[RMDB]
The record gives the reactivity of an RNA of 177 nucleotides to 2A3.
RNA sequence: GGGAACGACUCGAGUAGAGUCGAAAACAACGACUGCUGAUGGAGAGUGAAGAUGCCUGCUUCAUUAGUCAUCGAAUCAACAAUUCUCGACUUUUCGAAGGACGUCCAGAGCAGAUUGUUGAAUAUACCAUCCACGUCCUUUCGAGGACGUGGAUGGAAAAGAAACAACAACAACAAC
Reactivity to 2A3 in 0.01 (KOAc 150mM, MgCl2 10mM, bicine 150mM(pH8.5), 24C), signal-to-noise 1, nucleotides 027 to 126: c000a010a000c010g030a000c010u020g050c000u050g020a250u040g060g000a020g020a070g060u080g050a010a000g050a090u130g120c040c050u110g020c000u000u000c000a030u020u020a040g010u000c000a000u020c010g030a020a000u090c020a030a040c030a040a130u160u030c070u000c070g070a080c070u080u110u060u060c050g040a030a100g030g000a020c010g040u030c000c000a030g000a000g090c010a010g030a240u010u000g000u000u000g030a050a000u110a000u000a050
2A3 adducts were read by reverse transcription with SuperScript II with manganese.
The reactions ran in a buffer of 150 mM KOAc, 10 mM MgCl2 and 150 mM bicine (pH 8.5), at 24 C.
The data come from the RNA Mapping Database (RMDB), library OK2TST.